Overview:
Chemical mapping of a 207-nucleotide RNA with 2A3 and DMS. High 2A3 reactivity points to a flexible backbone, as in loops and unpaired stretches. DMS adducts were read by reverse transcription with MarathonRT. It was measured as part of the RMDB library M2RFPK. Reactivities are given for positions 27 through 156.
[RMDB]
RNA sequence: GGGAACGACUCGAGUAGAGUCGAAAACAAGAUCGGUGGAUAGCAGCCCUAUCAAUAUCUAGGAGAACUGUGCUAUGUUUAGCAGAUUAGGUAGUCUCUAAACAGAACAAUUUACCUGCUGAACAAAAAAAUCCAAUGGCGUUCGCGCCAUUGGAAAGAAUAGUAACUAGUUCGCUAGUUACUAUUCAAAAGAAACAACAACAACAAC
Reactivity to 2A3 in 0.01 (KOAc 150mM, MgCl2 10mM, bicine 150mM(pH8.5), 24C), signal-to-noise 6, nucleotides 027 to 156: c020a040a050g050a140u100c060g020g040u040g030g030a060u050a060g010c020a010g010c020c000c000u050a050u110c060a110a090u090a060u220c060u090a040g010g050a070g030a080a090c030u040g020u040g060c020u090a030u120g000u000u000u000a020g000c050a010g030a060u060u080a030g080g060u050a030g020u010c010u000c000u100a070a100a040c030a020g040a040a020c030a050a040u050u100u100a040c000c000u010g020c030u050g040a060a020c040a040a050a020a030a010a010a040u020c000c000a000a000u000g000g000c010g020u040u040c160g000c000g000c050c000a000u000u000g000g000a000a000a000
Reactivity to DMS in 0.01 (KOAc 150mM, MgCl2 10mM, bicine 150mM(pH8.5), 24C), signal-to-noise 2, nucleotides 027 to 156: c060a100a110g040a080u000c030g010g030u010g020g010a100u000a070g030c040a100g020c080c020c040u010a110u000c040a100a120u000a070u000c140u000a060g030g010a260g010a090a080c040u010g070u000g020c000u000a100u000g050u010u000u000a020g030c020a040g020a020u010u010a080g020g000u000a110g010u000c010u000c030u000a050a050a070c050a020g000a060a030c010a030a140u000u000u000a040c040c010u000g030c000u000g010a010a080c080a000a010a030a090a140a080a150u000c000c000a000a000u000g030g020c020g020u000u010c300g020c010g010c010c000a000u000u000g020g010a000a000a050